[RMDB]
RNA sequence: GGGAACGACUCGAGUAGAGUCGAAAAGGGAAGACAGUGAGUGGACGGAAUAAAUCCCCUUCCCACCUCCCCACUGUCCACUCACUGUCUUCCGAUAAGGAAAUAUAAAUCGGGGGUGGGAAGGGGAAGUCGACUAUAGUUUCGACUAUAGUCGACUAAAAGAAACAACAACAACAAC
Reactivity to 2A3 in 0.01 (KOAc 150mM, MgCl2 10mM, bicine 150mM(pH8.5), 24C), signal-to-noise 2, nucleotides 027 to 126: g080g000g000a000a030g020a000c020a000g020u020g030a000g000u010g000g000a000c030g010g050a010a020u110a110a080a060u090c000c000c000c000u000u010c010c000c000a000c010c010u000c080c110c010c030a080c030u030g000u000c000c020a000c000u000c010a000c010u010g000u010c000u030u000c010c000g010a010u050a030a040g120g030a030a130a030u300a030u070a040a140a000u200c130g020g000g000g000g000u000g000g000g000a000a020g010g000g000g000a000
Conditions: 150 mM KOAc, 10 mM MgCl2 and 150 mM bicine (pH 8.5), 24 C. Chemical mapping of a 177-nucleotide RNA with 2A3. For 2A3 the reverse transcriptase was SuperScript II with manganese. For 2A3, 2,193 sequencing reads were counted. It was measured as part of the RMDB library OK1LIB. Reactivities are rounded to 0.1 and cut off at 0 and 3.